[RMDB]
Source: RMDB library OK3TST, as collected in RNAgym. The record gives the reactivity of an RNA of 207 nucleotides to 2A3. The RNA was probed in 150 mM KOAc, 10 mM MgCl2 and 150 mM bicine (pH 8.5) at 24 C.

RNA sequence: GGGAACGACUCGAGUAGAGUCGAAAAGUGCACACCGUGCCCGGAGUCGAGAUCCGGCCGAGCAAGGCCGCCGGGCUCCGCGUGACGUACACCCGCAAGUCGAAGAGCAGCCCGGUCGACGGCCGCGAACUGGUCGCCGAGGCGUGGCGGUCCGGCGCAGCCGUGUUCUAUUCGUAGAACACGGCUGAAAAGAAACAACAACAACAAC
Reactivity to 2A3 in 0.01 (KOAc 150mM, MgCl2 10mM, bicine 150mM(pH8.5), 24C), signal-to-noise 1, nucleotides 027 to 156: g030u030g010c000a010c000a020c030c000g020u010g040c020c000c000g020g010a100g060u240c160g100a070g010a160u060c040c080g030g010c000c000g050a100g180c100a120a130g060g000c000c000g000c000c000g000g000g000c020u020c010c010g050c050g020u020g030a090c070g000u030a050c030a110c000c060c000g020c030a100a030g030u010c000g100a030a030g010a060g020c040a000g000c030c020c020g000g030u030c020g010a030c020g000g000c000c010g120c060g020a060a090c060u120g000g000u000c000g000c000c000g000a030g010g110c040g020u120g010g010c000g000g020u090c050c010g000g030c010g000

2A3 is a SHAPE reagent: it acylates the 2'-hydroxyl of flexible nucleotides of all four kinds.